The record gives the reactivity of an RNA of 177 nucleotides to 2A3. Source: RMDB library OK1LIB, as collected in RNAgym. Reactivities are given for positions 27 through 126. The 2A3 profile rests on 586 reads.
[RMDB]
RNA sequence: GGGAACGACUCGAGUAGAGUCGAAAAGCUAACAAGUGGUGCCGAUGCGCGCUAAGGCACCACAGCCACCGAUGACCUGCAAGGUGGCAAACAGGUCAGCUAAGAAAAGCGCGCACGCGAAAGCGGAGCAUUACGCGGGCUUCGGCCCGCGUAAUGCAAAAGAAACAACAACAACAAC
Reactivity to 2A3 in 0.01 (KOAc 150mM, MgCl2 10mM, bicine 150mM(pH8.5), 24C), signal-to-noise 1, nucleotides 027 to 126: g180c080u150a140a060c030a080a090g000u020g040g000u000g000c000c000g030a010u080g000c000g000c080g000c030u040a000a000g000g000c000a000c000c000a000c000a000g000c000c000a000c030c020g120a250u120g020a060c000c000u050g000c000a020a060g100g000u000g000g000c000a050a000a000c070a000g000g080u060c040a010g080c000u090a160a080g180a090a140a070a000g020c000g020c000g020c010a000c020g060c000g020a120a080a030g000c000g080g030a040